[RMDB]
RNA sequence: GGGAACGACUCGAGUAGAGUCGAAAAGCAAAAAUUAAGCCAUGCCUUAUCAUCCUUAUUUAAGGCCCCCACCCAGCCAUAAGUAAGAGCUGAGUCAAGCUAAAAGGGUUGGAUGUCUGUCGGCUUACGUAAGUUGGGGAUUCGUCCCCAACUUACGAAAAGAAACAACAACAACAAC
Reactivity to DMS in 0.01 (KOAc 150mM, MgCl2 10mM, bicine 150mM(pH8.5), 24C), signal-to-noise 1, nucleotides 027 to 126: g060c100a040a040a110a070a120u000u000a040a090g000c020c010a100u010g000c020c010u000u000a050u000c070a100u000c070c050u000u000a110u000u000u020a010a010g000g020c000c050c000c030c190a120c050c000c030a060g000c000c000a050u010a050a120g040u020a100a100g010a020g050c040u000g000a130g010u000c130a020a080g000c010u030a030a030a100a100g000g000g020u000u000g030g020a030u020g000u000c090u020g010u000c070g000g020c010u000u000a020
Conditions: 150 mM KOAc, 10 mM MgCl2 and 150 mM bicine (pH 8.5), 24 C. Structure probing data (DMS) for a 177-nucleotide construct. For DMS the reverse transcriptase was MarathonRT. For DMS, 992 sequencing reads were counted.